[RMDB]
RNA sequence: GGGAACGACUCGAGUAGAGUCGAAAAACCUCUAAGUUCGCUUAGAGGUAAUGAUCGCUGCAAAAAGCAGCGCGCUCAGCGGAGCACGCAAAAGCAACGCAAGAACACCAUUCUUCGGAAUGGUGAAAUGCCUUACUUAGUUCGCUAAGUAAGGCAUAAAAGAAACAACAACAACAAC
Reactivity to DMS in 0.01 (KOAc 150mM, MgCl2 10mM, bicine 150mM(pH8.5), 24C), signal-to-noise 3, nucleotides 027 to 126: a020c000c000u000c000u000a000a000g010u010u000c200g040c000u010u000a000g000a010g010g000u000a010a020u000g010a090u010c030g010c000u000g000c000a110a080a050a100a080g000c000a070g010c000g020c090g010c010u000c050a180g010c100g000g000a260g020c010a050c110g010c120a080a060a110a100g010c030a030a140c030g010c080a090a070g010a110a210c010a010c000c000a000u000u000c000u000u000c210g020g000a000a010u000g000g000u000g000a000a040
Reactivity to 2A3 in 0.01 (KOAc 150mM, MgCl2 10mM, bicine 150mM(pH8.5), 24C), signal-to-noise 3, nucleotides 027 to 126: a000c010c000u000c000u000a020a020g000u020u100c140g010c130u000u000a000g000a030g000g000u010a000a020u100g020a050u170c020g000c000u020g000c020a100a050a080a160a210g000c010a010g000c020g000c020g020c010u030c040a030g020c020g050g010a010g010c040a020c110g120c040a070a050a000a090g020c010a020a030c010g010c030a050a030g060a110a030c000a000c010c000a010u020u000c010u020u050c180g120g000a000a000u000g000g000u000g000a000a010